The record gives the reactivity of an RNA of 207 nucleotides to DMS and 2A3. The RNA was probed in 150 mM KOAc, 10 mM MgCl2 and 150 mM bicine (pH 8.5) at 24 C. The 2A3 profile rests on 1,866 reads. For DMS the reverse transcriptase was MarathonRT. Reactivities are given for positions 27 through 156.
RNA sequence: GGGAACGACUCGAGUAGAGUCGAAAACGUGCACUAGGUACGCCUAGUGCACAUUCCAGGACAUACUGCUGAGGAUGUCAAAAAUGCAGUUGGAGUCCUCAACUGGAUAGGCUACGGCCUAUCCAGAAAAAGACUUGGUUGUUCGCAACCAAGUCAACUAAUUCUUGAUGUUCGCAUCAAGAAUUAGAAAAGAAACAACAACAACAAC
Reactivity to DMS in 0.01 (KOAc 150mM, MgCl2 10mM, bicine 150mM(pH8.5), 24C), signal-to-noise 2, nucleotides 027 to 156: c070g030u000g010c000a040c000u000a000g010g020u000a080c300g030c020c000u000a020g010u000g050c010a000c010a000u000u000c040c150a150g030g010a090c020a110u000a020c010u000g030c080u010g010a120g020g010a080u000g000u000c030a020a090a060a140a170u000g010c040a080g010u000u000g010g010a230g010u000c020c000u000c020a030a160c000u000g000g020a000u000a000g000g000c030u000a100c300g090g040c000c010u000a000u010c010c000a010g000a000a030a120a140a150g010a020c010u000u000g010g010u000u000g010u010u000c270g040c020a030a010c020c010a020a020g020u000c000a000a090
Reactivity to 2A3 in 0.01 (KOAc 150mM, MgCl2 10mM, bicine 150mM(pH8.5), 24C), signal-to-noise 2, nucleotides 027 to 156: c080g010u000g000c000a010c000u000a000g000g020u080a070c200g120c010c000u000a010g000u000g050c010a000c000a000u000u000c000c000a020g000g020a000c020a030u140a000c050u020g000c040u050g030a050g150g140a300u240g220u300c180a080a070a010a020a030u160g010c010a000g000u010u050g070g080a130g020u010c000c000u050c030a060a060c000u010g010g020a010u000a000g000g000c020u040a050c300g040g020c010c000u000a000u000c000c010a000g000a000a000a010a010a000g000a000c000u000u000g010g000u000u000g010u010u120c220g010c050a000a000c000c010a000a000g010u000c000a000a010